[RMDB]
RNA sequence: GGGAACGACUCGAGUAGAGUCGAAAAGAUAUGGAGAUCCCAGGGAGAAGAUAUUCGGAAACGAAUAUACUUCGACGAUCUGGUGAUCUCCUAAGUCAAAGUACGUCAGAGUUCGCUCUGACGUACACCAAACUGUAUACUUCGGUAUACAGUUUGGAAAAGAAACAACAACAACAAC
Reactivity to 2A3 in 0.01 (KOAc 150mM, MgCl2 10mM, bicine 150mM(pH8.5), 24C), signal-to-noise 6, nucleotides 027 to 126: g000a000u010a000u040g000g000a000g000a000u000c020c000c010a000g030g000g010a040g010a000a000g000a010u000a000u000u010c010g010g000a020a010a000c010g020a010a010u030a020u070a300c020u000u010c000g020a070c000g000a010u000c000u010g000g030u100g020a010u000c000u000c000c000u000a000a000g000u000c020a090a060a060g000u000a000c000g000u000c000a000g010a010g030u070u180c300g080c120u000c000u000g000a000c000g000u000a000c000a000
Reactivity to DMS in 0.01 (KOAc 150mM, MgCl2 10mM, bicine 150mM(pH8.5), 24C), signal-to-noise 6, nucleotides 027 to 126: g000a010u000a040u010g000g000a020g010a000u000c000c000c000a010g000g000g000a010g010a020a000g010a040u000a000u000u000c000g010g000a010a010a030c000g010a030a010u000a000u000a120c010u000u000c000g020a110c290g010a020u000c000u000g010g000u010g000a010u000c000u000c000c000u000a000a040g000u000c000a130a110a150g020u000a000c000g000u000c000a010g000a020g020u000u010c300g020c000u000c000u000g000a010c000g010u000a000c010a130
The record gives the reactivity of an RNA of 177 nucleotides to 2A3 and DMS. It was measured as part of the RMDB library TTRDES. For 2A3, 49,202 sequencing reads were counted. The reactions ran in a buffer of 150 mM KOAc, 10 mM MgCl2 and 150 mM bicine (pH 8.5), at 24 C.